Structure probing data (DMS) for a 177-nucleotide construct.
[RMDB]
RNA sequence: GGGAACGACUCGAGUAGAGUCGAAAAGAAGGAUCUGGUACCGGGGAGGAAUAGCCCAUAGUACAAGGGGAGAUGCUAGGAGUCAGGGGAAGCCAGAACGACUGAGAAAGAAAAGAGAGCAACGGGGGAAUAGGAUAUCCUUCGGGAUAUCCUAUUCAAAAGAAACAACAACAACAAC
Reactivity to DMS in 0.01 (KOAc 150mM, MgCl2 10mM, bicine 150mM(pH8.5), 24C), signal-to-noise 1, nucleotides 027 to 126: g010a170a090g000g030a030u010c030u010g010g020u010a100c030c120g000g000g020g010a140g000g000a130a130u000a120g010c030c030c050a040u010a080g060u000a040c100a140a110g010g030g000g030a030g000a060u000g010c050u010a070g000g010a040g010u010c050a020g030g000g010g010a120a050g000c040c040a050g000a080a070c130g010a070c100u010g020a060g000a060a100a080g010a070a030a050a050g010a100g010a050g000c010a020a050c090g010g000g000g010
The data come from the RNA Mapping Database (RMDB), library 15KREP.